[RMDB]
RNA sequence: GGGAACGACUCGAGUAGAGUCGAAAAUCCCGUUGUUGGAGCGCGUAAGGGAUACGUAAUAAUAGGUCAGGUCAGAAAGAAGCGGCUUGGAGCCCCAUUUAUAUCUUUAACAUCGGGAGAAUCAUCCAGAGUUAGUACUAUUCGUAGUACUAACUCUAAAAGAAACAACAACAACAAC
Reactivity to 2A3 in 0.01 (KOAc 150mM, MgCl2 10mM, bicine 150mM(pH8.5), 24C), signal-to-noise 2, nucleotides 027 to 126: u000c010c010c000g000u010u040g000u000u010g020g020a040g020c100g000c020g080u050a040a100g140g000g060a050u040a140c040g020u020a040a050u090a130a040u030a120g000g080u080c010a000g000g000u020c030a030g110a060a220a020g090a170a040g100c050g020g000c010u000u020g050g050a080g070c000c000c000c020a000u000u090u020a060u000a020u050c010u020u040u020a020a010c020a020u050c000g010g050g010a020g050a050a080u070c030a040u020c040c010
Reactivity to DMS in 0.01 (KOAc 150mM, MgCl2 10mM, bicine 150mM(pH8.5), 24C), signal-to-noise 9, nucleotides 027 to 126: u000c000c000c000g030u010u000g020u000u000g010g010a060g010c210g020c040g030u000a070a100g010g010g010a130u000a030c060g010u000a110a090u000a070a090u010a070g010g000u000c030a050g010g010u000c040a090g010a090a100a120g010a120a160g010c120g010g000c040u000u000g010g000a090g010c090c020c020c060a070u010u000u000a060u000a080u010c020u000u000u000a040a050c070a060u000c040g000g010g000a050g000a070a080u010c130a070u000c050c070